An RNA of 170 nucleotides, treated with DMS and 2A3 and read out base by base. DMS adducts were read by reverse transcription with MarathonRT. For DMS, 34,025 sequencing reads were counted. The reactions ran in a buffer of 150 mM KOAc, 10 mM MgCl2 and 150 mM bicine (pH 8.5), at 24 C.

RNA sequence: GGGAACGACUCGAGUAGAGUCGAAAAAGCUCCUGCAUUGGUCUGAUCAAACCAUAUGCUACAAGGAUAGUGUGUUUUAUGUUGUAAAGAAUAGUACAGCUUUUCCAUUUGAAACACUUUCAGCAUGAUACGGAUAUCUUCGGAUAUCCGAAAAGAAACAACAACAACAAC
Reactivity to DMS in 0.01 (KOAc 150mM, MgCl2 10mM, bicine 150mM(pH8.5), 24C), signal-to-noise 6, nucleotides 027 to 129: a040g040c110u030c040c030u020g020c000a030u020u000g000g000u010c010u040g000a090u010c220a080a080a010c000c000a030u070a000u010g030c000u060a090c170a140a040g050g010a020u030a090g010u000g000u020g020u020u020u020u020a000u000g020u050u030g020u020a040a060a070g030a000a070u050a050g020u000a060c140a070g000c050u030u010u040u040c050c010a110u020u000u010g000a070a030a030c040a050c070u010u040u000c040a080g030c040a050u000g010a090u040a150
Reactivity to 2A3 in 0.01 (KOAc 150mM, MgCl2 10mM, bicine 150mM(pH8.5), 24C), signal-to-noise 9, nucleotides 027 to 129: a000g100c040u020c000c000u000g000c020a010u000u010g030g010u000c040u050g110a170u120c100a030a030a020c010c000a020u040a020u250g020c000u060a050c070a080a070g110g030a040u080a120g100u050g000u000g030u040u040u020u050a060u040g060u080u030g020u090a020a030a010g030a060a110u110a100g080u130a060c050a050g030c000u010u010u030u000c040c020a070u080u090u200g070a040a050a010c040a000c000u020u090u060c060a060g040c010a030u090g020a040u150a110